The record gives the reactivity of an RNA of 207 nucleotides to 2A3 and DMS. For 2A3, 1,613 sequencing reads were counted. Reactivities are given for positions 27 through 156. 2A3 adducts were read by reverse transcription with SuperScript II with manganese. Source: RMDB library M2RFPK, as collected in RNAgym. Conditions: 150 mM KOAc, 10 mM MgCl2 and 150 mM bicine (pH 8.5), 24 C. The DMS profile rests on 8,482 reads.
[RMDB]
RNA sequence: GGGAACGACUCGAGUAGAGUCGAAAACUCUUGUUAGGUGAAAGUUGAUGGUCGCCGUGUCAGUCCAUGCCUUUGAAAACAGUUCUAAGUAGUAGGGAGUCGAGAACCUAUGAGAGUUAGAACUUGCUAUGCCUUGGACUCUUCGGAGUCCAAGGAACCUACGAGUAUCGUUCGCGAUACUCGUAGGAAAAGAAACAACAACAACAAC
Reactivity to 2A3 in 0.01 (KOAc 150mM, MgCl2 10mM, bicine 150mM(pH8.5), 24C), signal-to-noise 3, nucleotides 027 to 156: c020u030c010u040u090g070u060u160a060g020g040u080g100a180a090a080g040u050u070g090a080u090g030g020u020c020g030c050c020g060u020g060u000c020a000g020u010c040c010a020u080g010c000c010u130u040u140g130a110a110a050a030c040a020g030u020u000c010u040a060a070g010u060a020g000u010a010g050g060g060a030g070u090c060g040a030g010a160a030c010c010u020a050u080g030a070g010a030g070u000u010a010g010a020a020c010u010u070g000c030u080a070u180g060c000c000u000u000g000g000a000c010u000c000u030u020c080g110g000a000g000u010c000c000a010a000g020g000a010a000
Reactivity to DMS in 0.01 (KOAc 150mM, MgCl2 10mM, bicine 150mM(pH8.5), 24C), signal-to-noise 3, nucleotides 027 to 156: c020u000c020u010u000g000u010u010a070g000g010u000g020a050a050a110g020u000u000g020a120u000g020g030u000c040g040c010c020g020u000g030u000c030a130g010u000c050c030a080u000g020c030c020u010u000u000g000a110a090a050a070c020a040g010u010u000c000u000a030a070g020u000a260g020u000a040g030g020g000a120g030u000c170g020a260g020a110a120c010c010u000a040u000g000a220g020a160g000u000u000a020g010a030a020c020u000u010g020c010u010a100u000g000c000c000u000u000g010g000a010c010u000c000u000u000c240g050g010a030g010u000c000c000a010a000g010g010a000a020